[RMDB]
RNA sequence: GGGAACGACUCGAGUAGAGUCGAAAAGCGUACUACCCAUCGAUGAAAUGCAUUGUCAGCUGCCAUUAGAUCCCAAAUAGGAUAUUCUGGCAGCUUGGAUUUAUGCAUGGAGAUGGGUAUCGCAAAACAAAGCUCCUACUUCGGUAGGAGCUUUGAAUCCGCUUCAUAGGUUCGCCUAUGAAGCGGAAAAAGAAACAACAACAACAAC
Reactivity to 2A3 in 0.01 (KOAc 150mM, MgCl2 10mM, bicine 150mM(pH8.5), 24C), signal-to-noise 1, nucleotides 027 to 156: g000c010g050u110a110c040u040a040c010c010c000a000u000c000g300a300u000g000a000a000a000u000g010c000a010u040u000g000u000c000a000g010c000u000g000c000c000a000u020u020a030g010a020u090c030c020c040a220a300a060u300a030g000g010a000u040a080u000u080c010u020g050g000c050a000g000c000u000u000g000g000a000u150u190u300a000u010g000c000a000u000g000g000a000g000a010u010g000g050g010u000a000u000c000g000c040a010a010a000a010c000a000a000a000g000c040u000c000c000u000a010c010u020u080c190g080g020u010a000g000g030a000g000c000u000u000u000g000a000a010